[RMDB]
RNA sequence: GGGAACGACUCGAGUAGAGUCGAAAAUGAGUAAGACGUGUGUGUCAAGCGAAGGCUUGGCUCAAACGGCUGCUAAAGUUGGAGGGCAAUGCGUGAGGCUGGUUUCACAGAGCAGCGAUUACUUCCCGCUUACAGCAGUGGACGGAUCACAGUUUGGCCCUAUCACUAGCUUCGGCUAGUGAUAGGGAAAAGAAACAACAACAACAAC
Reactivity to 2A3 in 0.01 (KOAc 150mM, MgCl2 10mM, bicine 150mM(pH8.5), 24C), signal-to-noise 3, nucleotides 027 to 156: u150g010a020g090u160a150a040g030a070c050g060u060g010u020g000u020g000u050c000a010a000g000c030g120a140a020g210g010c000u000u000g010g000c000u010c020a050a120a010c000g020g000c000u010g000c030u040a130a010a010g010u000u000g040g000a000g050g030g010c170a030a020u220g150c040g010u020g030a010g040g010c010u010g050g070u170u300u250c160a160c000a060g010a000g010c010a000g010c000g000a010u050u010a040c000u020u000c010c010c020g010c000u050u090a060c040a040g000c020a020g000u010g020g030a060c070g040g000a040u100c020a020c010a110g020u050u080u080g100g020
Record summary: The data come from the RNA Mapping Database (RMDB), library ARCHII. This 207-nucleotide RNA was probed chemically with 2A3. The reactions ran in a buffer of 150 mM KOAc, 10 mM MgCl2 and 150 mM bicine (pH 8.5), at 24 C.